This 207-nucleotide RNA was probed chemically with 2A3 and DMS. Values cover nucleotides 27 to 156. The RNA was probed in 150 mM KOAc, 10 mM MgCl2 and 150 mM bicine (pH 8.5) at 24 C.
RNA sequence: GGGAACGACUCGAGUAGAGUCGAAAAAGACCACCUCUACGGAGGUGGUCAAGUCACGUAGCUAGUACCAGGUUGCAAUAUUAGAGCGUUAGUCCUGGGGCGUACGGUGGCAGUACGCUGCCACCGAUAAAACUUGAAUACUUCGGUAUUCAAGUAACAGAUUCAUUAGAUUCGUCUAAUGAAUCUGAAAAGAAACAACAACAACAAC
Reactivity to 2A3 in 0.01 (KOAc 150mM, MgCl2 10mM, bicine 150mM(pH8.5), 24C), signal-to-noise 4, nucleotides 027 to 156: a020g010a000c000c000a010c010c000u010c010u040a080c300g080g000a000g030g000u000g020g010u000c010a000a000g010u000c000a000c050g010u040a050g040c040u020a040g030u100a160c010c010a020g010g040u070u070g040c030a040a050u070a130u210u150a080g040a040g070c040g050u080u140a020g050u080c000c000u010g000g000g010g060c040g030u130a040c020g000g000u010g000g000c000a000g000u030a020c270g010c080u000g000c000c000a010c000c020g000a000u030a010a090a010a020c000u000u000g000a000a000u000a000c000u020u050c170g060g000u000a000u000u000c000a000a000g000u010a020a010
Reactivity to DMS in 0.01 (KOAc 150mM, MgCl2 10mM, bicine 150mM(pH8.5), 24C), signal-to-noise 2, nucleotides 027 to 156: a080g000a010c010c000a030c010c000u000c000u010a070c300g080g000a010g020g020u020g030g000u000c000a000a020g030u000c100a080c030g000u000a090g020c010u000a030g010u000a050c010c000a070g030g020u010u000g010c060a080a080u000a100u000u010a080g010a300g010c000g000u010u020a070g010u010c010c000u000g020g000g010g010c120g010u000a040c040g020g050u000g040g040c010a050g040u010a080c170g030c000u020g010c020c000a010c000c040g010a030u000a030a070a070a040c000u000u010g000a030a010u000a010c000u000u000c290g050g030u000a000u000u000c000a000a000g020u000a020a150